RNA sequence: GGGAACGACUCGAGUAGAGUCGAAAACAGCAAUUAUUCGUAAUUGCUGAAUGGCGCACCCAGCGCGGAAGGAGCGCGCAGGACUCCUUCGCCGCCUUUUAAUAAGCAGGUACUUCGGUACCUGCAACAAUACCCAGAUAUUCGUAUCUGGGUAUUGAAAAGAAACAACAACAACAAC
Reactivity to 2A3 in 0.01 (KOAc 150mM, MgCl2 10mM, bicine 150mM(pH8.5), 24C), signal-to-noise 5, nucleotides 027 to 126: c000a000g000c000a000a010u010u020a020u070u160c180g060u060a030a010u010u000g000c010u000g000a010a100u100g040g000c040g000c000a050c000c010c010a030g030c040g000c030g070g020a010a010g010g010a010g010c090g010c050g050c160a050g090g120a210c010u010c000c000u010u010c010g020c020c010g030c000c000u150u260u100u100a190a210u220a190a030g000c000a000g000g000u000a000c000u020u100c190g050g000u000a000c010c010u010g010c000a000a000
Reactivity to DMS in 0.01 (KOAc 150mM, MgCl2 10mM, bicine 150mM(pH8.5), 24C), signal-to-noise 7, nucleotides 027 to 126: c010a010g000c000a010a000u000u000a020u000u020c200g020u000a000a000u000u000g010c000u000g010a070a060u010g010g020c040g010c160a120c010c000c010a220g010c060g020c020g020g010a020a010g010g000a020g010c080g010c180g020c200a070g000g000a190c010u000c000c000u000u000c010g010c060c050g010c040c030u020u000u000u000a060a150u010a100a110g010c000a000g000g000u000a000c000u000u000c160g020g000u000a000c000c000u000g000c000a010a030